[RMDB]
RNA sequence: GGGAACGACUCGAGUAGAGUCGAAAAUUGAAUGGGAUUUAAGUAGUGUUGGCCAUCUAGUAAAGGCAUUUAAGGAGUAUAAUAAUCUAGACAAAAUGCAAGGUAUAACCAAUUUAUUCCCAUUAGACUGCAUAGCUAUAUUCGUAUAGCUAUGCAGAAAAGAAACAACAACAACAAC
Reactivity to 2A3 in 0.01 (KOAc 150mM, MgCl2 10mM, bicine 150mM(pH8.5), 24C), signal-to-noise 4, nucleotides 027 to 126: u120u130g040a000a030u000g000g000g050a010u070u080u100a040a020g030u100a030g050u050g010u250u020g030g030c010c020a090u090c080u060a050g060u210a060a070a040g100g000c020a010u010u020u050a110a080g030g020a030g050u140a070u040a300a120u110a060a070u050c010u010a030g050a140c070a050a080a000a010u010g020c040a070a070g000g010u050a120u030a300a000c010c010a010a010u010u020u000a030u020u030c010c000c000a000u010u030a030g060a040
Reactivity to DMS in 0.01 (KOAc 150mM, MgCl2 10mM, bicine 150mM(pH8.5), 24C), signal-to-noise 6, nucleotides 027 to 126: u010u000g020a040a020u000g010g010g000a080u010u000u000a030a040g020u000a100g030u010g030u000u010g000g010c020c030a130u010c100u010a120g010u010a070a140a180g010g010c010a010u000u000u000a150a190g010g000a040g000u000a090u010a070a110u010a150a100u020c020u000a060g000a140c140a080a030a030a020u000g020c030a060a080g020g010u000a070u010a030a030c010c020a140a030u000u000u000a040u020u000c000c000c000a060u000u010a090g010a210
An RNA of 177 nucleotides, treated with 2A3 and DMS and read out base by base. The RNA was probed in 150 mM KOAc, 10 mM MgCl2 and 150 mM bicine (pH 8.5) at 24 C. It was measured as part of the RMDB library OK2TRN. DMS adducts were read by reverse transcription with MarathonRT.